Conditions: 150 mM KOAc, 10 mM MgCl2 and 150 mM bicine (pH 8.5), 24 C. Structure probing data (DMS and 2A3) for a 177-nucleotide construct.
RNA sequence: GGGAACGACUCGAGUAGAGUCGAAAAGAACAGCGCGUGACCGUCGAACAGAUCCAGGUUGCGACGCGAGGUGGCGCGGCCGGUGCCGCGAGCGAAGCCGGCGAGCGCGGCUUCGAGAACGGCACCGAUAAUUAGUCAGGUUCGCCUGACUAAUUAUAAAAGAAACAACAACAACAAC
Reactivity to DMS in 0.01 (KOAc 150mM, MgCl2 10mM, bicine 150mM(pH8.5), 24C), signal-to-noise 9, nucleotides 027 to 126: g010a110a140c100a210g010c010g010c010g020u000g000a090c150c000g010u000c040g000a080a070c130a110g000a100u010c140c140a130g010g010u000u000g010c000g000a060c020g000c050g010a090g010g020u000g010g010c020g010c030g010g020c190c010g000g010u000g010c010c000g020c300g000a170g000c010g010a020a020g020c000c010g010g000c070g010a090g010c140g010c000g000g010c000u000u000c000g010a040g000a170a030c000g000g000c000a010c000c000g000
Reactivity to 2A3 in 0.01 (KOAc 150mM, MgCl2 10mM, bicine 150mM(pH8.5), 24C), signal-to-noise 7, nucleotides 027 to 126: g050a080a040c040a060g060c010g000c010g030u040g080a020c020c010g050u060c020g020a080a050c050a100g060a150u110c080c030a070g020g090u040u140g080c010g050a040c010g020c020g020a060g020g060u090g030g010c020g000c020g050g020c050c010g000g000u000g000c010c000g010c010g000a020g030c000g000a000a000g000c000c010g250g280c110g110a080g040c250g010c000g020g000c000u000u000c000g010a020g000a020a000c000g000g000c000a000c000c000g000
For 2A3, 17,168 sequencing reads were counted.